[RMDB]
RNA sequence: GGGAACGACUCGAGUAGAGUCGAAAACUGAGGGCGACUGUGUAGUAGUUGCCACUGAUGCCUUGUGUACAGGGUACACUGGUGACUUUGAUUCCGUGUAUGACUGCAGCCUCAUGGUAGAAGGCACGUCGACCUGAUCCUUCGGGAUCAGGUCGACAAAAGAAACAACAACAACAAC
Reactivity to 2A3 in 0.01 (KOAc 150mM, MgCl2 10mM, bicine 150mM(pH8.5), 24C), signal-to-noise 1, nucleotides 027 to 126: c080u080g170a090g000g070g150c070g000a000c030u010g000u000g190u220a050g000u000a000g000u050u000g010c000c000a070c000u050g030a090u050g000c000c000u080u010g050u000g110u030a110c000a000g000g160g000u000a000c010a000c010u140g000g000u170g170a090c120u230u070u300g090a230u300u000c000c000g050u000g000u080a220u000g210a220c000u000g130c130a070g000c000c000u190c000a040u240g070g000u010a050g000a300a000g000g000c110a000c050
Conditions: 150 mM KOAc, 10 mM MgCl2 and 150 mM bicine (pH 8.5), 24 C. This 177-nucleotide RNA was probed chemically with 2A3. For 2A3, 274 sequencing reads were counted. Values cover nucleotides 27 to 126. Source: RMDB library OK1LIB, as collected in RNAgym. 2A3 adducts were read by reverse transcription with SuperScript II with manganese.